[RMDB]
RNA sequence: GGGAACGACUCGAGUAGAGUCGAAAAAACGCCGUAGGCGCAAGCCGUGAGGGUAACACGGCCUCCACCGGAGGCGGCGGCGGUGGCGCGCCGCCGGCGGAGAUAAGCGUGGCUGAACGCACGCAGCGGACGUGUAGCCGUUCGCGGUUACACGUCCAAAAGAAACAACAACAACAAC
Reactivity to DMS in 0.01 (KOAc 150mM, MgCl2 10mM, bicine 150mM(pH8.5), 24C), signal-to-noise 4, nucleotides 027 to 126: a040a060c020g000c000c000g030u010a060g000g000c000g030c070a130a210g010c000c000g010u000g000a140g020g000g000u040a080a200c050a030c030g010g000c000c200u010c020c000a100c120c120g000g010a100g000g000c010g000g040c110g020g020c040g000g050u000g010g000c300g010c010g050c000c030g010c240c010g000g010c000g010g000a060g000a100u050a080a110g000c000g000u000g010g030c040u010g000a090a160c110g000c020a030c010g000c000a160g020c160
Reactivity to 2A3 in 0.01 (KOAc 150mM, MgCl2 10mM, bicine 150mM(pH8.5), 24C), signal-to-noise 5, nucleotides 027 to 126: a000a000c000g000c010c000g050u040a040g000g040c010g000c060a070a020g000c000c000g000u010g020a200g060g160g050u090a110a010c060a010c060g090g000c000c010u010c010c000a210c090c200g030g000a040g040g000c040g010g020c010g050g010c030g000g040u010g030g010c060g000c000g000c010c000g010c000c000g000g000c010g010g020a160g010a110u200a160a030g010c010g010u030g060g020c060u090g120a110a060c080g010c030a010c000g000c000a010g080c080

Structure probing data (DMS and 2A3) for a 177-nucleotide construct. It was measured as part of the RMDB library OK1LIB. For DMS, 8,222 sequencing reads were counted. DMS adducts were read by reverse transcription with MarathonRT. 2A3 adducts were read by reverse transcription with SuperScript II with manganese.